[RMDB]
Source: RMDB library OK1LIB, as collected in RNAgym. Structure probing data (2A3 and DMS) for a 177-nucleotide construct. For 2A3 the reverse transcriptase was SuperScript II with manganese. DMS adducts were read by reverse transcription with MarathonRT.
RNA sequence: GGGAACGACUCGAGUAGAGUCGAAAAACAUCGAGAUUAAAGCCCCAGCAGGGACCAACAUCAACUCGGUGGAGACUGAGGAUGGCUAUGCCAACCAGCUAAUCAAUGCGGUACUUGAUACUGUGCAACCGAAUGGAAAGUUCGCUUUCCAUUCGGUAAAAGAAACAACAACAACAAC
Reactivity to 2A3 in 0.01 (KOAc 150mM, MgCl2 10mM, bicine 150mM(pH8.5), 24C), signal-to-noise 5, nucleotides 027 to 126: a010c000a020u030c030g000a010g010a030u070u190a100a040a080g030c000c000c000c000a060g120c070a040g000g000g030a020c070c040a080a080c040a150u190c040a020a110c020u010c020g000g000u030g020g060a100g030a020c030u050g030a070g100g070a150u040g010g040c060u200a070u300g060c000c000a000a020c020c000a000g020c050u120a050a000u130c080a050a120u180g020c020g030g000u010a050c020u040u120g040a070u020a060c010u020g010u010g090c000a060
Reactivity to DMS in 0.01 (KOAc 150mM, MgCl2 10mM, bicine 150mM(pH8.5), 24C), signal-to-noise 3, nucleotides 027 to 126: a070c040a070u000c010g030a050g020a070u030u050a030a170a210g000c040c010c000c050a280g060c190a120g020g010g010a020c010c100a130a110c170a080u010c270a040a180c060u000c030g000g070u000g000g030a090g000a100c030u010g040a180g020g010a060u030g010g000c020u000a070u050g010c000c000a000a100c000c000a050g000c040u010a050a020u020c110a050a060u010g000c000g000g010u000a010c050u030u010g000a130u030a020c040u010g000u000g000c190a140
Description:
The reactions ran in a buffer of 150 mM KOAc, 10 mM MgCl2 and 150 mM bicine (pH 8.5), at 24 C. Reactivities are given for positions 27 through 126.